[RMDB]
RNA sequence: GGGAACGACUCGAGUAGAGUCGAAAAACUGAGGGUACGCCGUCAGAACGGUAGAAAAGAUGGUUUGAAAACCACGCCUUCUACCAAUAUAGUAAAUAAAUAGGCGGAGCGGUCAUACGUGACCGCAAAAACAUCCUUGGCUUCGGCCAAGGAUGAACUGACUUACAACCUUCGGGUUGUAAGUCAGAAAAGAAACAACAACAACAAC
Reactivity to 2A3 in 0.01 (KOAc 150mM, MgCl2 10mM, bicine 150mM(pH8.5), 24C), signal-to-noise 1, nucleotides 027 to 156: a000c040u050g020a040g020g010g000u060a030c110g000c020c010g110u010c000a020g010a040a020c070g000g000u040a000g040a010a040a000a000g140a300u080g020g150u080u070u200g160a220a150a000a000c000c000a000c030g040c000c020u000u010c000u000a000c000c000a050a000u200a000u030a020g060u100a000a000a120u050a060a050a040u120a000g000g000c000g000g000a000g000c000g000g040u010c010a030u020a120c190g050u080g000a000c000c010g000c000a010a010a010a010a010c000a000u010c010c000u000u010g000g000c040u000u080c190g080g000c000c000a000a000g000g000a000u000g010a000a000
The record gives the reactivity of an RNA of 207 nucleotides to 2A3. The data come from the RNA Mapping Database (RMDB), library M2RFOK. Values cover nucleotides 27 to 156. For 2A3, 496 sequencing reads were counted. High 2A3 reactivity points to a flexible backbone, as in loops and unpaired stretches.